[RMDB]
RNA sequence: GGGAACGACUCGAGUAGAGUCGAAAAAGUACACUCGAGGAGUGGAAGGCGGGGAGGGCGGGGAGGAGUGUUACCCCACGGGAACUGCUGAGUGCCCCUGACGUCCAGACCCUCCCCCGUCCGGGAGAUACACCUGUCUUCGGACAGGUGAAAAGAAACAACAACAACAAC
Reactivity to DMS in 0.01 (KOAc 150mM, MgCl2 10mM, bicine 150mM(pH8.5), 24C), signal-to-noise 6, nucleotides 027 to 129: a090g070u000a110c110a000c000u020c040g030a110g000g000a090g030u040g060g030a120a110g000g060c060g040g010g040g020a010g020g080g020c130g010g010g040g020a020g000g030a060g000u030g020u000u000a130c060c000c030c040a120c200g010g010g000a100a050c090u020g000c100u050g000a060g040u030g030c050c020c010c010u040g000a070c130g030u000c060c110a090g020a100c040c020c010u030c010c010c000c010c010g040u060c020c040g000g000g000a120g000a120u060a080
Reactivity to 2A3 in 0.01 (KOAc 150mM, MgCl2 10mM, bicine 150mM(pH8.5), 24C), signal-to-noise 4, nucleotides 027 to 129: a020g090u100a000c020a000c020u020c030g030a000g030g010a020g060u080g010g040a080a030g030g030c070g000g050g000g030a090g010g040g000c040g010g010g000g010a040g000g030a040g010u090g050u030u040a120c000c000c010c010a030c040g000g000g000a080a060c040u040g020c040u090g090a020g120u090g010c010c010c000c000u030g030a030c030g040u010c010c020a030g010a120c000c000c000u010c000c000c000c000c000g000u000c000c040g000g020g020a060g000a040u120a040